Chemical mapping of a 177-nucleotide RNA with DMS and 2A3. DMS adducts were read by reverse transcription with MarathonRT. The DMS profile rests on 3,712 reads. Source: RMDB library OK1LIB, as collected in RNAgym. Conditions: 150 mM KOAc, 10 mM MgCl2 and 150 mM bicine (pH 8.5), 24 C. The 2A3 profile rests on 6,003 reads.
RNA sequence: GGGAACGACUCGAGUAGAGUCGAAAAGUCCCGCUUCGCAAGGGCAGCACCCUCGAAAUGGUCCGGCUCGCCUGCCCGGAUGCGGCGCAAGCCACCCUCAUCGCCGAGAGCUUCGGCCUCCCGGUCCGGGCACUAUAUCAUUCGUGAUAUAGUGCCCAAAAGAAACAACAACAACAAC
Reactivity to DMS in 0.01 (KOAc 150mM, MgCl2 10mM, bicine 150mM(pH8.5), 24C), signal-to-noise 2, nucleotides 027 to 126: g020u010c030c000c010g000c120u000u000c000g000c070a120a090g000g030g030c020a120g010c080a150c050c010c000u000c060g000a040a120a100u020g000g010u030c120c130g000g000c010u010c100g020c080c000u010g000c040c050c110g010g010a050u020g000c070g030g000c040g000c090a110a110g000c040c010a090c060c010c020u000c030a050u030c100g020c000c020g000a050g000a160g010c100u000u000c060g000g000c020c030u000c000c030c040g030g000u030c060c080
Reactivity to 2A3 in 0.01 (KOAc 150mM, MgCl2 10mM, bicine 150mM(pH8.5), 24C), signal-to-noise 5, nucleotides 027 to 126: g040u000c000c000c000g030c020u050u050c060g040c110a080a100g010g020g000c010a020g020c010a070c010c030c000u020c070g120a090a080a060u150g020g020u060c030c010g010g010c030u020c070g020c000c020u050g010c030c010c000g040g010a060u090g020c030g010g000c020g000c040a040a060g020c010c010a040c020c010c000u050c020a120u070c040g030c020c010g040a070g010a020g080c030u080u060c030g040g010c020c010u040c000c000c000g000g050u060c030c040